Chemical mapping of a 177-nucleotide RNA with DMS.
The reactions ran in a buffer of 150 mM KOAc, 10 mM MgCl2 and 150 mM bicine (pH 8.5), at 24 C.
RNA sequence: GGGAACGACUCGAGUAGAGUCGAAAAGAUAUGGAUGGUGGCAACAGAGUUUGUGACUCGGAAACGAGUCCAAACGACGAAGUUGCCAUCCAUCCUAAGUCUAAAGUCUGCUCUUCGGAGCAGACAACUACCAAACUCUGUUCGCAGAGUUUGGUAGAAAAGAAACAACAACAACAAC
Reactivity to DMS in 0.01 (KOAc 150mM, MgCl2 10mM, bicine 150mM(pH8.5), 24C), signal-to-noise 3, nucleotides 027 to 126: g000a020u000a290u020g000g000a000u000g010g030u000g000g000c000a010a020c020a110g020a190g000u000u000u000g020u030g010a010c000u000c000g010g010a070a060a140c000g020a020g020u000c020c000a000a000a000c010g000a190c300g020a060a120g000u010u000g010c000c000a000u000c010c000a000u000c000c000u000a010a140g000u000c000u000a080a120a150g020u000c000u000g010c010u000c000u000u030c220g000g010a000g000c010a000g000a010c010a020a140

Reactivities are given for positions 27 through 126. The data come from the RNA Mapping Database (RMDB), library TTRDES.